[RMDB]
RNA sequence: GGGAACGACUCGAGUAGAGUCGAAAAGGUGAGCUGGACGGGAAGUAGUUCCAGCGACUGCCUCCGAAGCUUUGAUAAGAGCAACUCCAUCUACGUUGCUCAAGUAGGUGGUAGCAGCAAACACCGAACGACGUAAUGCCUUCGGGCAUUACGUCGUAAAAGAAACAACAACAACAAC
Reactivity to 2A3 in 0.01 (KOAc 150mM, MgCl2 10mM, bicine 150mM(pH8.5), 24C), signal-to-noise 1, nucleotides 027 to 126: g020g080u090g000a020g000c000u000g020g020a000c050g160g000g030a170a000g150u160a000g080u110u000c000c030a000g010c000g000a000c000u000g010c000c020u000c000c000g090a060a050g000c070u190u250u300g050a050u180a110a200g000a000g020c000a000a000c000u070c050c000a300u010c040u150a060c130g020u020u000g010c000u040c000a010a000g000u030a000g000g060u050g000g030u000a000g020c000a000g000c000a130a130a000c010a020c000c000g000a020
Reactivity to DMS in 0.01 (KOAc 150mM, MgCl2 10mM, bicine 150mM(pH8.5), 24C), signal-to-noise 1, nucleotides 027 to 126: g030g000u000g000a030g000c000u000g000g040a040c000g000g030g050a260a160g030u020a060g000u020u000c000c000a030g030c000g000a040c000u000g020c000c000u050c000c000g030a170a220g000c150u060u170u000g030a130u000a160a070g000a000g050c000a000a050c020u000c300c260a040u200c300u000a030c260g000u000u030g000c020u000c000a000a030g000u000a070g010g040u000g000g030u000a000g000c160a030g000c140a080a040a200c000a030c000c000g050a060

An RNA of 177 nucleotides, treated with 2A3 and DMS and read out base by base. DMS adducts were read by reverse transcription with MarathonRT. It was measured as part of the RMDB library OK1LIB. Reactivities are given for positions 27 through 126. The 2A3 profile rests on 719 reads.